[RMDB]
RNA sequence: GGGAACGACUCGAGUAGAGUCGAAAAGAUAUGGAGACAUGGUGCGUGCUUGGAUUUAUCGGAAACGAUUGUCAGCACACACCCGCUGUCUCCUAAGUCAAAACCACGAACGUUCGCGUUCGUGGAAGGAGAAUUACAACUUCGGUUGUAAUUCUCCAAAAGAAACAACAACAACAAC
Reactivity to 2A3 in 0.01 (KOAc 150mM, MgCl2 10mM, bicine 150mM(pH8.5), 24C), signal-to-noise 3, nucleotides 027 to 126: g010a000u070a060u160g000g010a000g000a000c010a020u170g000g000u010g000c020g000u010g010c040u110u240g130g020a090u280u300u220a030u050c010g020g040a090a050a070c010g010a000u020u030g020u010c000a000g000c000a000c000a000c000a000c020c010c000g040c000u000g010u020c000u000c000c000u000a000a000g000u000c030a000a020a080a140c000c010a000c000g000a010a000c010g010u120u160c300g000c000g200u000u000c010g020u000g010g000a010a020